This 177-nucleotide RNA was probed chemically with DMS.
The reactions ran in a buffer of 150 mM KOAc, 10 mM MgCl2 and 150 mM bicine (pH 8.5), at 24 C.
[RMDB]
RNA sequence: GGGAACGACUCGAGUAGAGUCGAAAAAGGCGCGGAUCAUCGCUGUCGGCCUGCAUAUAGCCUGCUGCGAUUUCACCGUUGAAUUUUUCACCCCUGUCGAAUAUGAGGCCGCCGCGCAAGGCAUAUAUCAUGGAGUCACUUUCGAGUGACUCCAUGAAAAAGAAACAACAACAACAAC
Reactivity to DMS in 0.01 (KOAc 150mM, MgCl2 10mM, bicine 150mM(pH8.5), 24C), signal-to-noise 1, nucleotides 027 to 126: a010g010g010c060g000c000g010g000a160u000c130a040u000c050g020c040u000g000u010c300g000g000c010c030u020g020c150a080u010a130u000a150g000c020c000u000g030c030u010g020c030g000a050u000u000u000c130a100c050c060g010u030u010g000a070a030u000u000u000u030u000c070a190c130c030c030c060u010g030u000c080g000a040a140u000a060u010g010a060g000g020c010c040g020c020c030g000c040g040c030a020a020g010g000c020a050u000a090u000a080